Source information: This 177-nucleotide RNA was probed chemically with DMS and 2A3. The data come from the RNA Mapping Database (RMDB), library OK1LIB. The RNA was probed in 150 mM KOAc, 10 mM MgCl2 and 150 mM bicine (pH 8.5) at 24 C.
RNA sequence: GGGAACGACUCGAGUAGAGUCGAAAAGGCCUUAGAUUUGUUCCGAUAUGCAUGACCAUGUCGGAUCUUGGCUAAGGCAGGAUGGGCGAAUUUUCUAUGGUCAUGCAUGGGAACAAAUUCCAUCCUAGAUUGUAUUGAAUUUCGAUUCAGUGCAAUCAAAAGAAACAACAACAACAAC
Reactivity to DMS in 0.01 (KOAc 150mM, MgCl2 10mM, bicine 150mM(pH8.5), 24C), signal-to-noise 9, nucleotides 027 to 126: g010g010c300c030u010u010a030g000a050u000u000u000g000u000u000c000c000g030a140u060a010u000g000c000a010u000g000a020c010c000a020u010g010u020c130g000g000a010u000c020u000u000g000g020c020u010a060a060g010g020c020a020g010g000a010u010g010g000g000c030g030a060a070u020u010u010u020c090u030a030u000g000g000u000c020a010u010g000c000a000u000g000g000g000a010a000c020a000a010a020u000u010c040c040a060u000c010c000u000a140
Reactivity to 2A3 in 0.01 (KOAc 150mM, MgCl2 10mM, bicine 150mM(pH8.5), 24C), signal-to-noise 9, nucleotides 027 to 126: g050g020c010c010u030u070a020g000a020u010u000u010g000u010u000c000c010g050a130u040a010u070g000c010a010u010g000a010c000c000a010u030g050u060c020g020g010a000u000c000u010u030g070g000c010u020a050a040g090g010c000a000g010g000a010u020g010g050g050c030g030a040a040u040u030u030u020c050u040a010u020g000g000u010c000a000u010g000c000a000u020g020g000g010a010a000c000a000a010a000u050u000c010c010a030u010c000c000u000a030